[RMDB]
RNA sequence: GGGAACGACUCGAGUAGAGUCGAAAAGGGGUCUUCUUGUCAGAUUCCUAGUUAGGCUUGGAUUUAUGGACUGAAGCCUCCACGGUCCAUUGUCAGCCUAACGGGAAUCUUGGAUUUAGAAGACGGAGGCACCCAAACUGGCAGUUCGCUGCCAGAAGGUGACUGGAAUAUUCGUAUUCCAGUCACCAAAAGAAACAACAACAACAAC
Reactivity to 2A3 in 0.01 (KOAc 150mM, MgCl2 10mM, bicine 150mM(pH8.5), 24C), signal-to-noise 2, nucleotides 027 to 156: g050g000g040g000u020c010u010u000c010u030u040g020u020c000a000g010a010u000u030c040c000u030a210g000u000u000a000g000g020c050u030u190g150g000a130u300u300u140a010u080g000g020a010c000u010g110a130a040g060c040c090u000c000c020a030c000g000g000u000c000c000a000u020u010g010u010c020a020g000c010c000u000a000a000c010g000g010g000a000a000u000c000u000u070g040g030a010u000u270u250a020g000a000a000g010a000c020g000g010a020g000g010c040a060c040c000c000a010a040a040c000u020g000g000c000a000g020u060u140c180g140c150u000g000c000c010a000g010a030a050

This 207-nucleotide RNA was probed chemically with 2A3.
It was measured as part of the RMDB library RNAMAK.